[RMDB]
RNA sequence: GGGAACGACUCGAGUAGAGUCGAAAAAGGCGGACCGAGGAUGACAAGCUCCGGCCUUCGCGACGAGGUGGCCGCCAGCGCCGGUUAGCACAAGAUAUUUACUUUGUAGGGCACCGCUGUUGCGCAAGGAAGAGAAGUGAUUCGUCACUUCUCUUCCAAAAGAAACAACAACAACAAC
Reactivity to 2A3 in 0.01 (KOAc 150mM, MgCl2 10mM, bicine 150mM(pH8.5), 24C), signal-to-noise 5, nucleotides 027 to 126: a020g010g000c000g000g040a050c020c030g050a080g050g030a050u130g050a070c050a090a040g020c040u030c030c020g050g000c000c000u070u090c070g000c040g010a050c030g030a040g050g090u060g080g030c010c010g020c010c010a020g000c030g000c010c000g030g000u100u210a020g010c020a010c040a140a050g040a070u060a100u140u270u070a130c050u080u090u110g080u140a070g000g030g000c060a060c070c010g020c040u040g040u060u100g000c020g000c050a080a100
Reactivity to DMS in 0.01 (KOAc 150mM, MgCl2 10mM, bicine 150mM(pH8.5), 24C), signal-to-noise 4, nucleotides 027 to 126: a060g020g040c030g000g010a100c070c030g000a120g010g020a040u030g010a130c170a130a170g000c130u000c010c000g000g000c010c050u020u010c130g010c060g010a060c040g010a130g010g010u030g000g010c020c020g020c040c090a050g020c100g020c050c050g000g010u000u010a110g000c060a070c100a070a060g000a080u010a070u000u020u020a080c090u020u010u000g020u000a110g000g000g000c050a050c000c010g000c080u000g000u000u000g020c030g010c190a110a130
About this RNA:
Conditions: 150 mM KOAc, 10 mM MgCl2 and 150 mM bicine (pH 8.5), 24 C. The record gives the reactivity of an RNA of 177 nucleotides to 2A3 and DMS. Values are in units of 0.01, from 0 to 300, in steps of 10. Reactivities are given for positions 27 through 126. For 2A3, 4,443 sequencing reads were counted. DMS adducts were read by reverse transcription with MarathonRT. It was measured as part of the RMDB library OK1LIB.